[RMDB]
RNA sequence: GGGAACGACUCGAGUAGAGUCGAAAAAUUGCGUCGUGAGGGCCUUCACGUUAACCACAAGCGGGUAUACCGCAUUUAUCAUCUUAACGGCCUGAGUGUAAAGCGCAGACGACGUCGUAAGGGUCUGCGACAAGGCGAGAUUCGUCUCGCCUUGUCGAAAAGAAACAACAACAACAAC
Reactivity to 2A3 in 0.01 (KOAc 150mM, MgCl2 10mM, bicine 150mM(pH8.5), 24C), signal-to-noise 2, nucleotides 027 to 126: a000u050u100g010c020g000u070c030g010u050g050a070g060g000g000c010c020u040u070c070a030c080g020u030u050a080a050c100c010a080c050a090a140g010c030g040g030g030u170a130u170a190c010c010g000c000a020u010u040u050a070u030c030a040u020c040u080u060a040a030c000g020g000c000c030u020g020a040g030u060g000u040a170a210a020g050c050g000c020a000g000a050c000g000a000c020g010u060c030g050u140a000a060g070g010g010u000c030u060g030
Reactivity to DMS in 0.01 (KOAc 150mM, MgCl2 10mM, bicine 150mM(pH8.5), 24C), signal-to-noise 3, nucleotides 027 to 126: a050u020u000g000c020g010u000c220g030u000g010a130g010g000g000c040c040u010u010c190a100c110g020u000u000a030a100c090c110a070c200a100a150g010c000g000g020g020u020a180u020a170c010c000g000c010a100u010u000u020a110u010c200a030u000c080u000u000a060a080c100g010g000c000c030u010g010a190g000u000g010u000a060a040a130g020c000g000c020a050g010a060c020g010a040c080g050u000c100g010u020a080a240g010g010g000u010c000u000g010
This 177-nucleotide RNA was probed chemically with 2A3 and DMS.
It was measured as part of the RMDB library OK2TRN.
Conditions: 150 mM KOAc, 10 mM MgCl2 and 150 mM bicine (pH 8.5), 24 C.
Values cover nucleotides 27 to 126.